[RMDB]
RNA sequence: GGGAACGACUCGAGUAGAGUCGAAAACGUGGGCUGAAGCCCGGCGGCGGGUACGCCAACGCCGCGAGGACAUGCUGCGCCAUCCUGCAUUUCUGUCCAAGCAGCUCCCUCCCGAACCAGCGCACGAACUAUCUGUAUCCUUCGGGAUACAGAUAGUAAAAGAAACAACAACAACAAC
Reactivity to DMS in 0.01 (KOAc 150mM, MgCl2 10mM, bicine 150mM(pH8.5), 24C), signal-to-noise 5, nucleotides 027 to 126: c050g020u000g000g010g030c030u010g000a180a090g010c020c010c030g020g000c040g010g010c040g010g000g020u010a060c080g010c060c050a090a090c040g020c010c020g000c020g010a160g010g000a070c080a090u030g010c100u020g010c030g000c050c060a080u010c070c030u000g000c030a060u000u020u010c080u010g000u000c020c050a070a160g010c030a070g000c020u000c030c020c020u010c010c030c010g010a070a120c100c010a030g010c040g020c020a060c100g000a150
Reactivity to 2A3 in 0.01 (KOAc 150mM, MgCl2 10mM, bicine 150mM(pH8.5), 24C), signal-to-noise 9, nucleotides 027 to 126: c030g010u090g020g060g000c020u070g060a110a020g040c000c010c000g020g000c000g010g010c020g010g000g050u090a040c060g040c050c020a040a010c020g010c010c000g010c010g010a080g010g000a030c030a070u110g010c020u030g000c030g030c020c010a100u080c020c010u030g020c040a080u040u120u080c050u070g060u030c030c000a040a020g020c010a020g010c010u040c000c000c000u030c000c010c010g020a030a030c030c000a010g010c040g020c040a010c040g030a080
This 177-nucleotide RNA was probed chemically with DMS and 2A3.
For DMS the reverse transcriptase was MarathonRT.
For 2A3 the reverse transcriptase was SuperScript II with manganese.
Reactivities are given for positions 27 through 126.
Conditions: 150 mM KOAc, 10 mM MgCl2 and 150 mM bicine (pH 8.5), 24 C.
Values are in units of 0.01, from 0 to 300, in steps of 10.